[RMDB]
RNA sequence: GGGAACGACUCGAGUAGAGUCGAAAAAUAGAGGGAAAACACAUGCAAUACAAAGGUUAUGAGUUCGAGGAAGUCGAUGUGUCAGAAUGGAUGCAAUACGACGCAGAAAAGCAAGCCGCAUACCAUGAAUGGCUUAAGUCGAUCACGUUCACCAGUGCUCCGACAGGAGCUUCGGCUCCUGUCGGAGAAAAGAAACAACAACAACAAC
Reactivity to 2A3 in 0.01 (KOAc 150mM, MgCl2 10mM, bicine 150mM(pH8.5), 24C), signal-to-noise 1, nucleotides 027 to 156: a000u130a000g040a170g000g040g060a030a030a070a000c090a100c010a100u030g000c080a080a000u100a070c080a100a100a020g030g030u130u060a070u150g070a030g000u010u060c100g050a030g010g040a090a000g010u010c020g020a060u050g100u000g070u010c010a040g110a160a070u040g020g000a000u020g000c000a020a010u030a180c060g020a010c090g000c020a000g180a120a050a000a020g090c030a070a000g000c000c030g000c060a030u070a200c000c000a010u020g040a060a030u090g040g000c030u030u040a050a010g080u000c020g010a000u000c020a000c140g020u090u000c110a120c080c020a000g020u070g110
An RNA of 207 nucleotides, treated with 2A3 and read out base by base. The reactions ran in a buffer of 150 mM KOAc, 10 mM MgCl2 and 150 mM bicine (pH 8.5), at 24 C.